[RMDB]
RNA sequence: GGGAACGACUCGAGUAGAGUCGAAAACGCCCAUCCAACUCCUAUUCCAACACGUCCUCGUCGUACAGAGUGGUAACAUGUGUCACCACAUAUCCAAGCUUGGGUACACGGGCUUGACCCAACCCCUAAAACAGAGACGAGUUCGCUCGUCUCUGAACGAGACUAGUCUGUUCGCAGACUAGUCUCGAAAAGAAACAACAACAACAAC
Reactivity to 2A3 in 0.01 (KOAc 150mM, MgCl2 10mM, bicine 150mM(pH8.5), 24C), signal-to-noise 1, nucleotides 027 to 156: c000g010c000c030c000a050u150c060c020a040a030c070u020c000c000u000a000u020u040c050c010a030a000c050a030c040g090u010c030c060u130c040g150u030c020g000u090a110c060a060g070a030g050u030g000g020u030a040a010c030a100u230g120u050g030u060c020a020c020c010a000c000a030u110a000u000c070c070a000a030g070c090u010u020g010g000g030u010a020c010a050c090g000g000g040c000u100u170g160a290c000c000c010a000a020c010c030c000c000u020a030a000a020a020c000a000g020a000g000a000c000g000a010g000u080u080c150g030c030u000c000g000u000c000u000c000u000g000a000a000